[RMDB]
RNA sequence: GGGAACGACUCGAGUAGAGUCGAAAAUUUUAGUACAAGCGAGUACACGCAGUAUACUGCUACUUGUGUGAGAAUACUUUUAGUACAAGCGAGUACACGCAGUAUACUGCCACUUGUGUGAGAAUACACAUACUCCCGGUUUCGACCGGGAGUAUGUAAAAGAAACAACAACAACAAC
Reactivity to 2A3 in 0.01 (KOAc 150mM, MgCl2 10mM, bicine 150mM(pH8.5), 24C), signal-to-noise 3, nucleotides 027 to 126: u040u060u040u100a060g010u030a020c010a010a040g010c030g060a010g100u240a050c080a000c090g000c030a000g000u000a010u000a000c000u030g010c000u000a000c000u020u010g000u010g020u080g070a200g140a070a140u100a080c000u070u110u110u300a020g020u010a000c000a040a020g000c000g010a000g020u050a010c080a020c070g000c000a000g020u010a000u000a020c000u000g020c000c000a000c000u000u000g030u000g010u050g030a000g100a100a040u170a110c070
Reactivity to DMS in 0.01 (KOAc 150mM, MgCl2 10mM, bicine 150mM(pH8.5), 24C), signal-to-noise 3, nucleotides 027 to 126: u000u020u060u000a070g000u000a060c060a050a070g010c080g000a130g000u000a040c110a120c300g010c000a010g030u000a000u020a000c040u000g030c000u000a000c000u000u000g000u000g010u040g020a100g000a080a150u010a010c050u000u010u030u050a070g000u000a050c100a110a290g000c070g010a000g010u020a050c300a200c130g050c000a000g020u000a010u000a000c000u000g000c030c060a000c000u000u000g020u000g020u050g000a120g000a040a040u010a090c140
This 177-nucleotide RNA was probed chemically with 2A3 and DMS. For 2A3 the reverse transcriptase was SuperScript II with manganese. The 2A3 profile rests on 2,009 reads. The reactions ran in a buffer of 150 mM KOAc, 10 mM MgCl2 and 150 mM bicine (pH 8.5), at 24 C.